[RMDB]
RNA sequence: GGGAACGACUCGAGUAGAGUCGAAAAGUUAAGAGGAGGCAGAGAAGAGCAGAAACACUUCUUUGCUGACACUUACACUGUUGCCAUGGACCUACAUAAGCAGUGGGAGAACACAGAGACUAACUGGCAUAAGGAAAAGAUGGAAUUACUGGACCAAUCAUUUAGCAGGCUUCGGCCUGCUAAAUGAAAAAGAAACAACAACAACAAC
Reactivity to 2A3 in 0.01 (KOAc 150mM, MgCl2 10mM, bicine 150mM(pH8.5), 24C), signal-to-noise 2, nucleotides 027 to 156: g030u040u030a010a010g020a000g040g000a000g000g040c010a000g000a010g010a030a000g000a030g010c200a050g210a060a090a030c040a010c010u010u000c000u000u000u000g020c000u000g020a030c000a000c000u020u010a000c040a010c060u030g040u060u070g090c000c050a050u030g040g010a040c040c070u170a110c060a090u190a090a090g080c070a040g050u060g020g040g010a100g020a050a020c030a000c030a060g040a010g060a070c020u040a100a020c040u060g000g020c010a070u050a210a140g070g000a040a090a010a060g030a010u070g000g000a060a050u050u050a080c090u050g090g000a050c110c000a010a040